[RMDB]
RNA sequence: GGGAACGACUCGAGUAGAGUCGAAAAUAAGCACCUCGUUAGGUGAGGCGGCUACACGAACAUAGGCCACUGACCCCGAACGUCGAGAGACGCCCCGGGUCAGGACAGCUCUUCCCGGCGUAAGGGUAAAAUCACAACGUCUUCGGACGUUGUGAAACUAAUCCAAUGAGUUCGCUCAUUGGAUUAGAAAAGAAACAACAACAACAAC
Reactivity to 2A3 in 0.01 (KOAc 150mM, MgCl2 10mM, bicine 150mM(pH8.5), 24C), signal-to-noise 3, nucleotides 027 to 156: u190a030a010g070c020a020c020c010u010c040g070u070u230a110g000g090u160g050a020g010g000c110g020g010c040u100a040c100a040c150g130a270a010c040a110u180a090g070g000c030c020a050c040u000g000a010c000c030c010c030g040a060a040c000g000u000c000g000a030g000a000g010a120c000g050c010c020c040c010g000g000g000u020c010a000g010g020a010c020a010g000c000u050c020u070u050c020c010c000g000g010c000g060u090a070a090g010g000g030u060a080a090a000a060u030c000a000c000a000a000c000g010u000c000u020u070c210g090g000a000c000g010u000u000g000u000g000a000a000a000
Reactivity to DMS in 0.01 (KOAc 150mM, MgCl2 10mM, bicine 150mM(pH8.5), 24C), signal-to-noise 2, nucleotides 027 to 156: u010a060a080g020c020a080c000c010u000c040g000u000u000a180g060g020u010g000a040g010g040c000g040g020c000u000a090c020a130c060g020a070a080c120a190u000a100g040g050c000c010a100c030u000g000a070c000c000c010c070g000a070a030c000g030u000c000g040a300g000a300g000a030c000g020c020c010c040c200g010g020g030u020c020a020g000g000a080c050a200g000c000u010c030u000u000c000c020c000g000g030c020g020u000a060a200g010g020g000u000a000a040a090a120u010c000a010c020a010a020c000g010u000c010u000u000c300g050g000a020c000g020u000u000g010u020g000a000a010a100